[RMDB]
This 177-nucleotide RNA was probed chemically with DMS and 2A3. Source: RMDB library OK2TRN, as collected in RNAgym. Conditions: 150 mM KOAc, 10 mM MgCl2 and 150 mM bicine (pH 8.5), 24 C. DMS adducts were read by reverse transcription with MarathonRT. The DMS profile rests on 5,818 reads.
RNA sequence: GGGAACGACUCGAGUAGAGUCGAAAAUCACACGAGUAUCAUAAGGAAACAUUAGACAAGAUCAGAGAAGUCGAAAAGAAAGUUGGAUUCAAGAUCGGUGUCUUACAAGAUAUCUGCGGUCCAAAGAAACAUUAUCUUCGUUCGCGAAGAUAAUGUUAAAAGAAACAACAACAACAAC
Reactivity to DMS in 0.01 (KOAc 150mM, MgCl2 10mM, bicine 150mM(pH8.5), 24C), signal-to-noise 6, nucleotides 027 to 126: u010c040a070c060a090c140g010a090g010u020a020u010c040a120u010a120a130g000g000a130a070a100c120a090u010u000a070g000a050c040a140a120g010a050u000c030a070g010a290g010a070a060g020u000c050g010a040a050a050a110g000a060a060a090g010u000u000g010g000a040u000u010c020a060a200g000a080u010c040g010g030u000g010u000c010u000u000a090c240a080a070g000a030u000a020u000c020u010g010c070g020g000u000c020c040a030a060a080g010a140
Reactivity to 2A3 in 0.01 (KOAc 150mM, MgCl2 10mM, bicine 150mM(pH8.5), 24C), signal-to-noise 5, nucleotides 027 to 126: u070c010a030c010a020c090g040a040g040u030a030u090c030a070u060a240a070g090g030a130a110a040c040a090u070u100a020g020a010c030a060a000g010a040u040c030a020g050a000g020a130a020g070u070c060g050a050a030a030a020g160a040a100a010g050u070u080g050g000a040u200u150c030a030a030g040a110u080c050g070g020u020g000u010c010u010u040a080c050a040a070g010a050u020a010u020c020u070g080c030g010g010u020c000c000a030a080a010g080a010